The record gives the reactivity of an RNA of 177 nucleotides to DMS and 2A3. Source: RMDB library OK2TRN, as collected in RNAgym. As a SHAPE reagent, 2A3 marks flexible, mostly unpaired nucleotides at the ribose 2'-OH. For 2A3, 2,936 sequencing reads were counted. The RNA was probed in 150 mM KOAc, 10 mM MgCl2 and 150 mM bicine (pH 8.5) at 24 C. The DMS profile rests on 2,016 reads. For 2A3 the reverse transcriptase was SuperScript II with manganese. DMS adducts were read by reverse transcription with MarathonRT.

RNA sequence: GGGAACGACUCGAGUAGAGUCGAAAAGUCUAGCGAAGGGAUCCCACCCGGGAAACACGCAAGUCGCGAAUUAAGCCGACCGGCCAAGGUCAAUGGCAGAACUCAACUGCAUGAGUAAGCUAGACGACAUACUGCCAUACUUCGGUAUGGCAGUAUGAAAAGAAACAACAACAACAAC
Reactivity to DMS in 0.01 (KOAc 150mM, MgCl2 10mM, bicine 150mM(pH8.5), 24C), signal-to-noise 3, nucleotides 027 to 126: g020u000c010u000a030g020c000g000a110a040g030g040g000a070u000c000c010c010a300c020c020c010g000g000g040a160a110a150c020a000c090g000c020a080a070g000u000c120g010c130g010a070a070u010u000a130a100g000c000c030g020a060c050c040g020g010c160c190a080a090g000g010u000c050a090a080u000g020g020c010a070g000a070a100c090u000c010a070a030c030u010g000c030a040u000g000a100g010u000a070a150g030c000u000a000g000a010c010g000a190
Reactivity to 2A3 in 0.01 (KOAc 150mM, MgCl2 10mM, bicine 150mM(pH8.5), 24C), signal-to-noise 2, nucleotides 027 to 126: g000u000c010u010a020g000c020g070a300a170g000g000g020a020u040c000c010c000a070c020c020c000g000g000g000a100a140a010c040a000c030g000c080a110a090g070u050c020g000c070g170a060a110u160u070a200a010g040c010c010g030a010c010c000g110g100c080c080a120a100g000g020u030c050a020a130u170g030g000c010a010g030a050a040c030u030c060a000a080c020u030g000c010a040u040g020a030g100u020a000a030g010c000u000a010g000a000c010g000a000